[RMDB]
This 207-nucleotide RNA was probed chemically with 2A3.
2A3 adducts were read by reverse transcription with SuperScript II with manganese.

RNA sequence: GGGAACGACUCGAGUAGAGUCGAAAAGGGACGCCUUUAGAAGAAGAGGCUAGGUGGUAUUCCGGUGUGGGAUACUUGGUAAUAUGUAACGCUAAUUGCAUAUGAUUGUAGGACGGAAUUUACAGUCAAAACGGUCCUGCGUUCGCGCAGGACCGAAUCCAUGUAUCCGGUUCGCCGGAUACAUGGAAAAAGAAACAACAACAACAAC
Reactivity to 2A3 in 0.01 (KOAc 150mM, MgCl2 10mM, bicine 150mM(pH8.5), 24C), signal-to-noise 1, nucleotides 027 to 156: g060g000g000a000c050g000c010c050u160u060u020a190g020a150a030g030a000a000g050a020g010g000c040u030a040g000g080u070g040g000u080a030u040u000c050c010g010g000u190g030u280g000g040g010a000u020a040c020u010u070g050g000u060a110a090u010a040u060g020u030a060a090c050g040c190u130a030a100u100u020g030c000a040u010a000u050g010a080u110u080g030u000a000g040g030a030c030g010g000a000a000u140u030u170a020c000a000g050u110c040a000a000a010a200c010g000g010u010c000c000u010g010c000g020u000u050c280g000c070g080c040a000g000g010a000c000c000g010a000a000